[RMDB]
RNA sequence: GGGAACGACUCGAGUAGAGUCGAAAACUUAAUAAGUUCAAUAGAGCUAGUUUGCGUCAAAUUUUUGACGUAGCCCCCAUUGAACUCGAAAAUAAAUUCACACCUUUGAGUGUGGAGUCUACACCAGGAAAACUGUUUAGUUCGCUAAACAGUUUUCAAAAGAAACAACAACAACAAC
Reactivity to 2A3 in 0.01 (KOAc 150mM, MgCl2 10mM, bicine 150mM(pH8.5), 24C), signal-to-noise 1, nucleotides 027 to 126: c010u040u010a050a040u100a220a090g010u010u030c010a000a010u030a210g000a000g000c010u020a000g030u070u110u130g010c000g000u000c050a020a090a140u300u260u040u010u020g000a010c000g000u000a000g000c000c080c000c000c020a000u000u020g000a000a000c000u000c050g060a000a000a070a090u190a030a120a010u050u030c000a010c000a010c010c030u110u200u170g110a160g050u020g000u000g000g000a000g030u000c030u040a050c050a070c120c020a000g100
Reactivity to DMS in 0.01 (KOAc 150mM, MgCl2 10mM, bicine 150mM(pH8.5), 24C), signal-to-noise 1, nucleotides 027 to 126: c040u000u000a130a200u000a150a030g000u000u000c000a000a030u000a150g020a090g030c100u000a090g010u000u000u010g020c020g060u000c000a020a050a300u000u010u000u000u000g000a000c010g020u000a020g040c000c070c060c090c020a030u000u000g000a000a010c000u010c110g000a120a070a040a070u020a030a120a220u000u000c000a010c020a010c000c020u010u030u000g000a180g070u000g000u000g000g020a000g000u000c070u010a130c170a170c120c030a170g010